Structure probing data (DMS and 2A3) for a 177-nucleotide construct.
The 2A3 profile rests on 3,064 reads.
Conditions: 150 mM KOAc, 10 mM MgCl2 and 150 mM bicine (pH 8.5), 24 C.

RNA sequence: GGGAACGACUCGAGUAGAGUCGAAAAGACCGUCAGUUAGACGGAAGAAGUGCAUAAAUCCACAGCGGAAGACGAGAUAUUGCACAAAUGUGGAUAAGCGUACGGAUCUACGUGCGCUAAACGUGAGCCUGCACUGACUAUUCGUAGUCAGUGCAGGAAAAGAAACAACAACAACAAC
Reactivity to DMS in 0.01 (KOAc 150mM, MgCl2 10mM, bicine 150mM(pH8.5), 24C), signal-to-noise 3, nucleotides 027 to 126: g010a090c000c000g070u000c000a180g010u070u040a080g000a010c000g000g020a070a050g030a050a090g000u000g030c010a030u010a000a080a060u020c010c000a030c030a120g020c200g010g010a070a090g030a140c060g000a090g000a150u030a060u070u070g020c080a050c040a080a090a140u020g040u000g010g000a010u030a120a060g000c000g000u000a000c010g000g000a070u070c300u110a090c020g020u000g000c000g000c010u000a000a060a050c210g020u000g000a070g000
Reactivity to 2A3 in 0.01 (KOAc 150mM, MgCl2 10mM, bicine 150mM(pH8.5), 24C), signal-to-noise 4, nucleotides 027 to 126: g090a060c000c000g000u040c000a050g000u090u280a040g000a020c030g070g010a010a050g070a090a010g010u020g020c040a040u080a250a270a000u020c000c000a050c050a080g070c100g100g050a060a030g110a040c070g020a000g010a090u070a110u130u240g020c020a010c050a030a060a020u070g000u010g000g050a040u060a170a010g000c000g000u020a000c020g000g020a000u020c020u140a080c040g000u000g020c000g000c000u010a010a010a000c010g020u040g020a010g040